[RMDB]
This 177-nucleotide RNA was probed chemically with 2A3 and DMS.
For 2A3, 3,906 sequencing reads were counted.
Source: RMDB library M2PK50, as collected in RNAgym.
RNA sequence: GGGAACGACUCGAGUAGAGUCGAAAAUGUGGGGACUUCGGUCCCCACAAUAACGAGGAGCGGUUGGCCUCGUAAAAAGCCCCAAACUACGAAAGUAGAAAACACACGUCGAGUUCGCUCGACGUAAAACCAUAACAUGGUUCGCCAUGUUAUGGUUAAAAGAAACAACAACAACAAC
Reactivity to 2A3 in 0.01 (KOAc 150mM, MgCl2 10mM, bicine 150mM(pH8.5), 24C), signal-to-noise 2, nucleotides 027 to 126: u060g000u000g000g000g000g010a000c020u030u030c260g120g000u000c000c000c000c000a000c000a000a000u020a000a000c000g000a000g020g000a020g160c060g040g160u020u040g020g030c010c000u000c010g000u010a010a020a000a010a010g050c010c000c010c000a050a050a030c010u020a010c010g030a070a060a000g000u000a010g020a080a200a010a000c080a010c010a010c020g000u000c000g000a010g020u060u060c140g060c080u020c010g000a000c000g000u000a010a000
Reactivity to DMS in 0.01 (KOAc 150mM, MgCl2 10mM, bicine 150mM(pH8.5), 24C), signal-to-noise 4, nucleotides 027 to 126: u010g030u000g010g010g010g010a020c010u000u020c170g030g030u000c000c000c000c000a000c000a010a020u000a060a040c010g010a010g000g010a060g000c050g010g030u000u010g010g000c020c010u010c000g010u010a020a050a080a080a050g000c130c010c000c160a070a070a140c010u010a000c010g000a120a100a170g010u000a000g000a080a060a070a060c150a090c220a030c010g000u000c000g010a020g010u000u000c230g010c000u000c000g010a020c010g010u000a000a040